The record gives the reactivity of an RNA of 177 nucleotides to 2A3.
The RNA was probed in 150 mM KOAc, 10 mM MgCl2 and 150 mM bicine (pH 8.5) at 24 C.
Reactivities are given for positions 27 through 126.
It was measured as part of the RMDB library OK1LIB.
RNA sequence: GGGAACGACUCGAGUAGAGUCGAAAAUGCCAGUACUCUCCUCUCUUCUACAUUUUUGUAGUCAUGCUACCAUCCUACCUAGAGAGAGAGGAGAGAAAGUGGUAGGAUGGUAGCUUCUGGCUAAGAAGGGUAUAGGAUCGUUCGCGAUCCUAUACCCAAAAGAAACAACAACAACAAC
Reactivity to 2A3 in 0.01 (KOAc 150mM, MgCl2 10mM, bicine 150mM(pH8.5), 24C), signal-to-noise 2, nucleotides 027 to 126: u160g040c040c000a010g020u110a150c020u030c000u000c000c000u000c050u100c170u230u050c070u110a040c010a180u240u110u130u120u140g070u040a000g000u000c050a060u280g020c000u050a000c000c000a000u000c000c000u000a000c000c070u120a050g000a030g000a000g010a000g010a000g300g000a000g040a000g020a020a020a000g140u060g010g000u000a000g070g000a000u000g000g000u000a000g000c000u000u000c000u000g000g000c000u000a000a100g120a090a070